Source information
An RNA of 177 nucleotides, treated with 2A3 and DMS and read out base by base. For DMS the reverse transcriptase was MarathonRT. For 2A3, 2,537 sequencing reads were counted. The RNA was probed in 150 mM KOAc, 10 mM MgCl2 and 150 mM bicine (pH 8.5) at 24 C. 2A3 adducts were read by reverse transcription with SuperScript II with manganese.
[RMDB]
RNA sequence: GGGAACGACUCGAGUAGAGUCGAAAAUCGACGGCCGAUCGGUGCUGAACUACGAUCCCAACUAGCUAGGUCAGCGCAUUGGCAUGCUUUUACAGCAUUCAAUCUUCUCCUGCGACGCACGGUGCUAACGUAAAUCCGUGUUCGCACGGAUUUACGUAAAAGAAACAACAACAACAAC
Reactivity to 2A3 in 0.01 (KOAc 150mM, MgCl2 10mM, bicine 150mM(pH8.5), 24C), signal-to-noise 2, nucleotides 027 to 126: u060c010g030a030c040g020g030c040c010g040a060u030c110g060g070u020g010c020u000g010a050a000c020u050a000c040g080a100u070c040c000c010a000a050c040u060a010g120c040u010a010g030g000u000c010a010g000c030g020c040a040u000u070g030g000c040a010u030g040c010u200u220u090u090a130c160a050g000c000a080u050u090c020a010a090u010c060u090u010c040u050c040c020u010g020c040g020a010c040g050c050a030c030g020g000u030g050c060u110a120
Reactivity to DMS in 0.01 (KOAc 150mM, MgCl2 10mM, bicine 150mM(pH8.5), 24C), signal-to-noise 3, nucleotides 027 to 126: u000c090g020a160c120g010g020c040c020g010a040u000c180g030g050u000g000c010u000g010a010a040c020u000a030c070g010a210u000c010c010c010a120a110c150u000a130g000c210u000a020g000g010u000c010a000g030c030g040c040a070u000u000g010g010c090a070u010g000c010u000u000u020u010a060c160a060g000c050a000u000u000c090a060a080u000c080u000u000c050u000c020c060u000g000c030g010a070c170g040c050a050c010g000g000u010g010c070u000a100